[RMDB]
RNA sequence: GGGAACGACUCGAGUAGAGUCGAAAAACGCGGAGUACGCUCCGCGACAACACUUCUUUCGACCCGCUAGCCGAGACCUAUGGGUCGUUAAAUUACGUCUCUAUCUUACUCACAUAACAUCGCACAAAAAACGUGGUUCGGUUCGCCGAACCACGAACUAACUACACCAGUUCGCUGGUGUAGUUAGAAAAGAAACAACAACAACAAC
Reactivity to DMS in 0.01 (KOAc 150mM, MgCl2 10mM, bicine 150mM(pH8.5), 24C), signal-to-noise 1, nucleotides 027 to 156: a080c020g020c020g000g000a020g040u000a150c290g010c010u000c000c000g010c020g020a060c060a130a100c040a120c100u000u000c070u010u010u010c000g040a040c020c000c040g000c140u000a060g000c010c040g010a060g020a160c110c000u000a060u020g020g000g030u000c010g030u000u020a020a110a140u000u000a050c070g010u000c000u020c050u010a150u020c000u000u010a050c030u060c000a070c060a060u000a050a150c020a070u000c040g000c000a090c030a000a020a130a090a040a150c010g000u000g030g010u010u010c010g030g020u000u000c300g030c000c000g000a000a010c020c050a010c000g040a010a040
Reactivity to 2A3 in 0.01 (KOAc 150mM, MgCl2 10mM, bicine 150mM(pH8.5), 24C), signal-to-noise 5, nucleotides 027 to 156: a000c020g000c010g000g010a010g000u050a040c180g050c050u000c000c000g010c000g020a000c000a070a040c030a020c050u120u160c040u040u200u090c010g030a000c000c000c010g040c150u060a020g020c050c050g060a020g010a070c000c000u030a060u130g010g010g000u000c000g010u030u060a020a050a050u170u100a030c050g020u000c010u000c010u000a120u090c050u050u100a070c030u060c080a080c030a170u190a190a050c020a110u160c120g040c150a040c100a050a080a060a080a050a020c040g000u010g000g000u000u000c010g000g050u030u050c150g040c050c010g000a000a000c000c010a000c000g000a000a000

The record gives the reactivity of an RNA of 207 nucleotides to DMS and 2A3. Conditions: 150 mM KOAc, 10 mM MgCl2 and 150 mM bicine (pH 8.5), 24 C. For DMS the reverse transcriptase was MarathonRT. For DMS, 2,272 sequencing reads were counted. It was measured as part of the RMDB library M2RFPK.